[RMDB]
RNA sequence: GGGAACGACUCGAGUAGAGUCGAAAAAAGAUAUGGAUCCGUGGAUAAGGAGCACUCCGUUUGACGACCUCUCGGAAACGAGAGGUCCGAGGAGUGAACUACUCCGUAACACGGAUCCUAAGUCAAACGACACUUAUAUCUUCGGAUAUAAGUGUCGAAAAGAAACAACAACAACAAC
Reactivity to DMS in 0.01 (KOAc 150mM, MgCl2 10mM, bicine 150mM(pH8.5), 24C), signal-to-noise 3, nucleotides 027 to 126: a140a090g000a010u000a300u000g000g000a010u000c000c000g040u000g000g030a140u020a170a210g000g000a020g010c000a010c000u000c000c010g040u010u020u020g010a280c300g000a010c000c010u000c000u000c000g010g000a030a020a060c000g020a020g000a020g000g020u000c010c020g010a050g010g010a030g010u000g000a020a040c110u000a300c010u010c000c010g000u010a130a240c000a000c010g000g020a000u000c000c000u000a000a070g010u010c000a120a090a170